Record summary
The data come from the RNA Mapping Database (RMDB), library OK2TST. An RNA of 177 nucleotides, treated with DMS and read out base by base.

[RMDB]
RNA sequence: GGGAACGACUCGAGUAGAGUCGAAAAGUCAGAGCAACCUCAGCAAAGCUCCAACCAUGGACGCUCAUGAGCACCCACCCCCCUCAGGAAAACACAGCCCCUGACCCAGGCUAUGAAGUGCAAAGCACCCACCGUUACUUUUCGAAGUAACGGUGGGAAAAGAAACAACAACAACAAC
Reactivity to DMS in 0.01 (KOAc 150mM, MgCl2 10mM, bicine 150mM(pH8.5), 24C), signal-to-noise 1, nucleotides 027 to 126: g000u000c030a170g000a060g050c020a070a100c070c020u050c060a130g030c140a120a060a030g020c000u000c010c040a090a140c180c140a130u000g010g000a080c150g040c020u000c020a040u000g010a100g010c040a170c010c000c030a250c020c000c000c000c000c030u010c070a020g030g000a030a050a070a070c020a080c050a020g000c010c010c010c000u000g050a080c020c030c150a070g000g000c010u000a030u010g020a000a060g020u020g020c000a040a050a090g050c200a130
For DMS the reverse transcriptase was MarathonRT.